[RMDB]
RNA sequence: GGGAACGACUCGAGUAGAGUCGAAAAGGGGUCUGUACAGGAACGUUUGACGUGUAAGACAUGAGCUGAAGCCUCCACGGCUCAACAGCUUACACCGAGUUCCGUACAGACGGAGGCACCCAAAACAGCGAAGAUUCUUUCGAGAAUCUUCGCUGAACUUUAUGUUGACGUUCGCGUCAACAUAAAGAAAAGAAACAACAACAACAAC
Reactivity to 2A3 in 0.01 (KOAc 150mM, MgCl2 10mM, bicine 150mM(pH8.5), 24C), signal-to-noise 5, nucleotides 027 to 156: g150g030g050g000u020c000u020g020u050a060c260a300g040g060a020a010c010g010u120u240u300g030a020c010g000u010g000u010a000a000g020a060c130a300u250g000a000g000c000u010g010a080a020g020c000c000u000c000c000a020c010g000g010c000u000c010a020a070c060a030g100c010u000u000a000c000a000c000c020g030a010g030u000u010c000c000g000u000a000c000a000g010a000c000g000g000a000g000g000c010a050c000c000c010a030a080a010a030c000a000g000c010g000a000a000g000a010u010u020c000u050u170u240c280g050a030g010a000a000u000c000u000u000c000g000c010u000g000a000a000
Reactivity to DMS in 0.01 (KOAc 150mM, MgCl2 10mM, bicine 150mM(pH8.5), 24C), signal-to-noise 2, nucleotides 027 to 156: g030g000g060g030u000c020u000g000u010a010c020a190g100g030a030a000c000g060u000u000u010g020a170c180g030u000g010u000a000a030g010a110c060a300u000g010a060g050c000u000g010a070a160g010c020c010u000c000c040a300c070g010g000c010u000c000a040a110c080a090g020c030u010u000a020c000a030c000c020g010a090g010u000u010c000c030g020u000a010c030a020g000a020c000g000g040a020g030g030c010a100c010c010c010a080a040a130a180c000a020g060c000g000a030a000g000a000u000u000c000u000u000u020c300g000a040g020a000a000u000c000u000u000c000g030c000u020g000a010a060
Background
This 207-nucleotide RNA was probed chemically with 2A3 and DMS. Conditions: 150 mM KOAc, 10 mM MgCl2 and 150 mM bicine (pH 8.5), 24 C.